[RMDB]
RNA sequence: GGGAACGACUCGAGUAGAGUCGAAAAUCGUGCCCCCCGUCAGGUAGCCUGGGGGCGAGGUGCUGGAGGACCGAGUAGAGGAUCGAGAAAACGUCGCGGUCGUAGACCACGACCGACCGGGGGCCGAAGGCACCACGAGCUUCGGCUCGUGGUGCCUAAAAGAAACAACAACAACAAC
Reactivity to DMS in 0.01 (KOAc 150mM, MgCl2 10mM, bicine 150mM(pH8.5), 24C), signal-to-noise 1, nucleotides 027 to 126: u000c010g020u030g000c010c000c000c000c010c160g000u010c050a090g010g030u010a130g000c040c010u000g020g020g000g020g010c020g000a010g000g040u000g000c030u000g010g020a110g000g000a030c060c020g000a170g040u000a020g000a040g000g000a110u020c090g000a130g000a020a130a010a230c080g010u000c050g070c100g000g070u010c010g000u020a050g030a050c020c100a110c060g010a010c010c110g010a030c050c160g000g020g000g030g010c010c000g000a010
Reactivity to 2A3 in 0.01 (KOAc 150mM, MgCl2 10mM, bicine 150mM(pH8.5), 24C), signal-to-noise 1, nucleotides 027 to 126: u090c000g030u160g040c000c000c000c000c000c000g090u050c010a080g080g070u180a030g030c000c020u090g040g000g000g050g070c010g000a020g000g030u090g000c040u030g030g040a030g060g000a000c000c000g020a070g000u250a030g050a110g050g120a060u040c050g030a050g080a150a100a000a020c030g050u020c030g020c000g000g030u010c020g010u060a030g030a080c040c000a020c000g000a010c030c020g000a030c010c000g000g010g000g010g000c020c000g030a020
An RNA of 177 nucleotides, treated with DMS and 2A3 and read out base by base. The reactions ran in a buffer of 150 mM KOAc, 10 mM MgCl2 and 150 mM bicine (pH 8.5), at 24 C.